Chemical mapping of a 177-nucleotide RNA with DMS and 2A3. Reactivities are given for positions 27 through 126. The RNA was probed in 150 mM KOAc, 10 mM MgCl2 and 150 mM bicine (pH 8.5) at 24 C. High DMS reactivity at an A or C suggests that its Watson-Crick edge is free. Source: RMDB library OK2TRN, as collected in RNAgym.

[RMDB]
RNA sequence: GGGAACGACUCGAGUAGAGUCGAAAACGACGCCAUUUGUCAGGUGGUGCGGGUGUUCGUCGACGACGACGUGACUCAUGUCACCGGACGGGUCGAUCCCCAGUCCGACAUUGAGGUCGUCGAGACCGCACGUAUGGUAAUUCGUUACCAUACGUGCAAAAGAAACAACAACAACAAC
Reactivity to DMS in 0.01 (KOAc 150mM, MgCl2 10mM, bicine 150mM(pH8.5), 24C), signal-to-noise 9, nucleotides 027 to 126: c040g010a060c050g000c300c010a110u000u010u010g010u010c100a130g010g030u010g010g010u000g010c060g000g000g010u000g010u010u000c030g020u000c020g020a210c100g000a060c020g010a050c070g010u000g020a210c000u000c070a070u000g000u000c030a130c160c050g000g000a030c010g010g000g010u010c090g010a130u010c170c010c000c060a110g000u000c010c010g000a060c070a080u010u020g000a070g000g000u000c030g010u000c030g000a160g000a140c060c120
Reactivity to 2A3 in 0.01 (KOAc 150mM, MgCl2 10mM, bicine 150mM(pH8.5), 24C), signal-to-noise 9, nucleotides 027 to 126: c010g090a020c020g040c040c010a080u090u070u180g190u140c090a070g030g110u060g020g060u060g050c040g000g030g020u080g070u100u110c030g020u000c010g040a150c040g010a020c010g010a010c030g070u070g070a050c010u030c100a050u140g020u020c010a010c020c050g000g010a000c000g000g000g020u090c130g050a150u140c010c000c000c000a050g020u000c010c010g010a020c040a050u070u220g070a070g100g000u050c020g000u000c010g010a030g010a040c020c030